An RNA of 177 nucleotides, treated with 2A3 and DMS and read out base by base. For DMS, 895 sequencing reads were counted. Conditions: 150 mM KOAc, 10 mM MgCl2 and 150 mM bicine (pH 8.5), 24 C. For DMS the reverse transcriptase was MarathonRT.
RNA sequence: GGGAACGACUCGAGUAGAGUCGAAAAGGUGAACUACCUGUAGCUGUAGUCAAUGAUAAGAUCUUCACCAAGAGUGGCGUUAAUGACAUUUGUAUGUUUGAGAAUAAAACCACUUUGCCUACUAAUACGUGAGGUAGUAGUUCGCUACUACCUCACGAAAAGAAACAACAACAACAAC
Reactivity to 2A3 in 0.01 (KOAc 150mM, MgCl2 10mM, bicine 150mM(pH8.5), 24C), signal-to-noise 2, nucleotides 027 to 126: g060g010u010g000a010a020c020u010a030c020c000u060g160u130a050g000c110u060g000u030a010g020u040c030a020a120u090g110a050u040a030a090g030a070u040c030u030u010c000a000c030c030a000a010g020a000g010u000g030g000c060g010u060u120a090a040u080g020a000c040a010u110u180u210g240u270a050u010g030u010u030u040g060a050g070a060a020u090a060a050a010a010c000c010a020c000u020u020u060g020c000c000u030a100c020u090a130a090u100a120
Reactivity to DMS in 0.01 (KOAc 150mM, MgCl2 10mM, bicine 150mM(pH8.5), 24C), signal-to-noise 2, nucleotides 027 to 126: g000g000u010g010a040a130c030u010a040c010c050u010g060u000a110g000c140u030g000u000a030g000u000c150a090a130u010g010a050u000a090a050g020a300u000c040u000u000c060a020c020c020a040a060g010a020g030u010g000g000c100g010u010u000a060a190u030g000a030c090a000u010u010u010g010u000a000u000g010u000u000u000g000a140g030a080a060u000a070a050a120a070c020c040a010c010u000u000u010g000c030c030u000a050c140u010a080a050u010a140